RNA sequence: GGGAACGACUCGAGUAGAGUCGAAAAUAACCUGGCGGCGACACUUGGCUGGAUGCUUGGCAGUAACAACGGUCAACGCGUGGUAUUUACCAUCCUCCUGCUGUUGGUCGCUCCGGCUUACAGUUUAAAUAGCGUACCUGUUCGCAGGUACGCUAUUAAAAGAAACAACAACAACAAC
Reactivity to 2A3 in 0.01 (KOAc 150mM, MgCl2 10mM, bicine 150mM(pH8.5), 24C), signal-to-noise 3, nucleotides 027 to 126: u130a030a000c000c010u030g060g000c030g000g010c020g010a000c040a020c090u090u100g030g000c010u000g010g030a060u140g070c050u000u100g050g000c050a020g000u090a100a070c080a090a000c060g070g000u050c030a000a020c060g030c030g080u030g020g000u070a150u140u250u120a070c000c020a050u140c020c010u040c030c010u030g000c000u010g010u190u040g060g010u040c000g020c020u030c000c000g010g000c020u060u050a010c050a040g050u070u010u080a090
Reactivity to DMS in 0.01 (KOAc 150mM, MgCl2 10mM, bicine 150mM(pH8.5), 24C), signal-to-noise 2, nucleotides 027 to 126: u010a030a120c090c000u010g010g020c210g030g000c010g010a010c040a060c070u020u000g000g030c030u000g000g000a090u060g030c130u000u030g000g000c040a020g000u040a120a130c080a070a120c030g050g000u040c070a100a110c120g000c010g050u080g020g030u040a110u040u000u070a040c000c010a150u030c130c060u000c010c020u000g000c000u010g020u030u000g000g030u000c010g000c080u040c000c000g000g040c140u000u000a090c140a060g030u030u000u020a040

This 177-nucleotide RNA was probed chemically with 2A3 and DMS. The reactions ran in a buffer of 150 mM KOAc, 10 mM MgCl2 and 150 mM bicine (pH 8.5), at 24 C. Values are in units of 0.01, from 0 to 300, in steps of 10. For 2A3, 1,740 sequencing reads were counted. For DMS, 1,836 sequencing reads were counted. In probing experiments dimethyl sulfate is read out at A N1 and C N3, which are open when not base-paired. Source: RMDB library OK1LIB, as collected in RNAgym.